Structure probing data (2A3 and DMS) for a 177-nucleotide construct. Reactivities are given for positions 27 through 126. The reactions ran in a buffer of 150 mM KOAc, 10 mM MgCl2 and 150 mM bicine (pH 8.5), at 24 C.
RNA sequence: GGGAACGACUCGAGUAGAGUCGAAAAGGUAAGUUAGGAGAAGGUGACUUUUUCUCUUUUUCUGAAGGUUGGAGCUCUGCCCAUUAUAUUAAGAAGUUGGUUUCAGACUACAAUUCAAGGAUAUUACGACAUUCGUAUCUUUCGAGAUACGAAUGUCAAAAGAAACAACAACAACAAC
Reactivity to 2A3 in 0.01 (KOAc 150mM, MgCl2 10mM, bicine 150mM(pH8.5), 24C), signal-to-noise 3, nucleotides 027 to 126: g060g030u070a000a010g000u020u060a020g080g000a000g030a090a080g010g010u050g120a120c040u080u080u030u140u010c030u000c000u050u070u020u060u070c040u050g080a170a050g040g000u040u020g020g030a060g020c030u000c010u030g000c060c020c000a020u110u050a060u020a040u090u140a140a130g030a090a060g150u090u050g070g030u000u110u130c000a020g010a010c020u010a040c040a060a100u040u060c000a040a060g070g020a040u040a050u170u100a010c050
Reactivity to DMS in 0.01 (KOAc 150mM, MgCl2 10mM, bicine 150mM(pH8.5), 24C), signal-to-noise 3, nucleotides 027 to 126: g000g010u000a050a060g010u010u000a060g030g000a060g010a080a040g000g020u040g000a090c140u010u010u020u010u010c010u000c020u000u000u010u010u000c020u000g020a170a080g000g010u000u010g020g000a020g010c060u000c010u000g020c300c020c020a060u030u000a060u030a120u000u000a060a160g000a060a100g000u020u010g000g010u000u020u030c090a060g010a020c050u010a040c070a050a040u000u000c060a110a130g010g000a080u010a040u000u040a130c180